Source: RMDB library OK3TST, as collected in RNAgym. Chemical mapping of a 207-nucleotide RNA with DMS and 2A3. For DMS the reverse transcriptase was MarathonRT. 2A3 adducts were read by reverse transcription with SuperScript II with manganese. Conditions: 150 mM KOAc, 10 mM MgCl2 and 150 mM bicine (pH 8.5), 24 C. Reactivities are rounded to 0.1 and cut off at 0 and 3.

[RMDB]
RNA sequence: GGGAACGACUCGAGUAGAGUCGAAAAAUCACGGCACAGCACCGGCUGGGGCGCGACAUCCGUCUGUCUGCCAUUUAUGCCGCUUUGCAUGUGGAAGGUGUGCAGCGUGUCGAACUGGCUGCACCACUGGCCGACAUCGUGCUCAACAGUACGCAGGACGUGCAGGAUAUUUCGAUAUCCUGCACGUAAAAGAAACAACAACAACAAC
Reactivity to DMS in 0.01 (KOAc 150mM, MgCl2 10mM, bicine 150mM(pH8.5), 24C), signal-to-noise 1, nucleotides 027 to 156: a100u000c010a050c080g020g000c030a130c130a110g000c030a140c070c100g000g020c030u000g000g000g000g020c020g080c050g010a030c010a080u010c050c100g010u010c040u000g050u020c020u000g020c020c010a140u010u000u000a060u000g010c000c100g030c080u010u000u010g050c050a060u010g060u030g000g000a070a000g040g010u000g030u000g000c000a050g040c000g040u010g050u020c110g000a080a200c080u000g030g000c000u000g020c020a030c040c050a010c090u000g010g020c000c050g000a070c080a080u000c030g000u010g010c020u000c050a020a110c030a140g030u000a030c040g020c050a210g030g000
Reactivity to 2A3 in 0.01 (KOAc 150mM, MgCl2 10mM, bicine 150mM(pH8.5), 24C), signal-to-noise 3, nucleotides 027 to 156: a000u080c040a040c020g030g020c040a010c020a060g040c000a040c030c020g010g000c000u010g000g000g020g000c000g000c030g010a020c010a090u060c050c090g140u060c050u030g030u030c010u030g010c070c040a060u040u140u150a110u110g010c010c000g110c040u120u100u190g030c020a060u080g030u030g050g080a060a050g100g020u110g000u000g070c000a000g000c010g000u090g080u190c130g020a060a110c050u060g200g000c000u010g010c000a010c000c040a010c010u020g030g000c010c010g020a020c010a050u090c010g010u030g000c010u030c060a050a070c020a080g000u090a040c130g000c040a050g040g100